[RMDB]
RNA sequence: GGGAACGACUCGAGUAGAGUCGAAAAGAUAUGGAAUUCGACUUUCGAAGAACAUACUCUUAUCGGAAACGAUAAGAGGUAUGGGAGAAACCGAAUUCCUAAGUCAAAAGGUCACUUCGGUGACCAACAUGACAGAUAACUUCGGUUAUCUGUCAUGAAAAGAAACAACAACAACAAC
Reactivity to 2A3 in 0.01 (KOAc 150mM, MgCl2 10mM, bicine 150mM(pH8.5), 24C), signal-to-noise 5, nucleotides 027 to 126: g020a010u040a030u120g000g000a000a000u010u000c020g020a060c040u040u030u050c100g210a300a180g080a300a080c010a000u020a020c000u000c000u010u000a000u000c000g020g010a060a040a040c010g000a000u010a000a010g020a020g050g030u040a020u000g060g050g060a300g000a040a010a000c020c010g000a000a000u000u020c000c000u000a080a010g060u020c010a030a030a080a240g000g000u010c000a010c030u050u170c300g180g000u000g000a000c000c000a000a000
Reactivity to DMS in 0.01 (KOAc 150mM, MgCl2 10mM, bicine 150mM(pH8.5), 24C), signal-to-noise 5, nucleotides 027 to 126: g020a040u000a300u010g000g000a020a010u000u000c000g020a130c210u010u010u000c010g000a180a200g030a160a210c020a010u000a020c000u000c000u000u000a010u000c000g030g000a090a100a200c000g010a010u000a000a000g000a020g020g020u010a000u000g000g010g020a180g000a020a000a020c160c000g000a020a020u000u000c010c010u000a020a090g010u010c050a120a110a140a110g000g010u000c010a000c000u000u020c250g030g020u010g000a000c000c000a010a100